[RMDB]
RNA sequence: GGGAACGACUCGAGUAGAGUCGAAAAGACACGCGGUCCGCUAUAACGAGUCAUAUGAAUUUAGGCUCGUUGUAGGGAACGGAGUGUUUACAGUUCCGAAGAAUAAUAAAAUAGAUCGGGCUGCCUGUAAGGAGCCUGAUAUGAAUAUGUACCUCCAACGGACAAUAAAGUUCGCUUUAUUGUCCGUAAAAGAAACAACAACAACAAC
Reactivity to 2A3 in 0.01 (KOAc 150mM, MgCl2 10mM, bicine 150mM(pH8.5), 24C), signal-to-noise 3, nucleotides 027 to 156: g010a000c010a000c010g040c020g000g020u000c010c010g020c240u010a000u000a010a000c010g000a000g000u000c040a080u100a050u290g220a300a100u110u210u230a010g010g000c020u000c000g030u000u000g000u000a000g000g010g000a010a000c000g000g020a100g020u000g000u000u000u020a070c050a030g010u050u000c000c010g010a100a030g060a090a020u190a130a040u080a050a170a020a050u130a030g080a040u010c000g000g000g010c000u140g190c060c000u180g100u120a140a170g000g010a000g020c000c040u000g000a010u010a010u070g030a020a020u230a060u180g010u040a070c000c000u050c000c000a020
Reactivity to DMS in 0.01 (KOAc 150mM, MgCl2 10mM, bicine 150mM(pH8.5), 24C), signal-to-noise 2, nucleotides 027 to 156: g010a000c020a010c010g000c020g010g030u000c010c030g000c010u000a000u000a010a030c000g010a030g000u000c010a160u010a190u000g010a130a160u000u010u010a090g000g020c030u000c000g030u000u010g040u000a020g000g020g010a020a010c000g000g020a120g020u000g000u000u000u000a070c070a170g010u000u000c000c000g020a110a130g010a160a090u000a070a110u010a050a090a130a150u000a090g000a040u010c010g020g000g030c000u000g020c000c020u010g010u000a130a090g060g000a090g000c010c010u000g010a000u000a020u000g010a110a120u010a060u010g010u010a180c070c000u000c020c020a200